[RMDB]
RNA sequence: GGGAACGACUCGAGUAGAGUCGAAAAGUUCGUUACUAGAGAAGUUUCUCUGAUCGUGUAGAGCACCGAAAACCACGAGGAGGAGGCGCAGUGUUCUCUCCUGAGCGUGAAGCCGGCUCUUGGUGUCGUGUUCAUUAUAUUUCGAUAUAAUGAACACAAAAGAAACAACAACAACAAC
Reactivity to 2A3 in 0.01 (KOAc 150mM, MgCl2 10mM, bicine 150mM(pH8.5), 24C), signal-to-noise 9, nucleotides 027 to 126: g040u050u060c030g030u060u070a060c060u060a020g020a010g020a130a060g060u030u170u020c030u000c020u030g060a100u050c050g010u020g030u100a050g020a020g090c040a040c030c030g040a050a040a030a050c040c010a010c020g010a010g030g050a030g050g040a030g030g000c050g010c110a090g040u040g050u250u030c030u000c000u000c010c030u040g030a050g030c020g010u060g050a040a010g060c030c020g090g000c010u000c000u030u060g040g000u040g030u080c060
Reactivity to DMS in 0.01 (KOAc 150mM, MgCl2 10mM, bicine 150mM(pH8.5), 24C), signal-to-noise 9, nucleotides 027 to 126: g010u010u010c050g010u010u010a050c050u010a070g010a040g000a080a240g000u010u010u010c000u000c050u010g000a120u010c040g010u010g010u020a090g010a130g000c040a070c040c030g000a070a060a130a120c160c020a030c040g010a050g000g010a070g020g010a070g000g000c060g010c150a130g010u020g000u010u000c010u000c120u010c070c040u000g000a050g010c030g010u010g000a100a160g010c110c040g000g000c020u000c020u000u000g010g020u010g010u010c180